[RMDB]
RNA sequence: GGGAACGACUCGAGUAGAGUCGAAAACUCAAUGUAGGGAAUAACAUUGAAUUGAUACAAAUAACUUUUUCGGUGUAGGGAAAAACACCGAAUUGAUACAAAUACCUUUCUCAAUGUAGGGAAUAACAAAACAGGCAUCGCUUCGGCGAUGCCUGAACAUGGUGAAAUCCUUCGGGAUUUCACCAUGAAAAGAAACAACAACAACAAC
Reactivity to 2A3 in 0.01 (KOAc 150mM, MgCl2 10mM, bicine 150mM(pH8.5), 24C), signal-to-noise 2, nucleotides 027 to 156: c010u000c000a000a000u070g050u100a110g000g070g110a090a110u190a170a020c010a010u010u030g030a090a090u100u110g050a070u180a190c080a050a140a040u140a210a060c010u090u050u000u020u000c000g000g020u000g020u040a050g080g020g040a140a090a050a030a000c000a010c000c000g000a000a000u020u010g020a000u010a050c020a000a150a010u060a050c000c010u060u090u010c030u010c020a110a130u160g010u100a100g010g010g080a020a050u100a150a020c070a040a050a040a040c010a010g000g020c000a000u020c000g000c000u000u040c170g020g000c000g000a000u000g030c000c010u000g000a000a000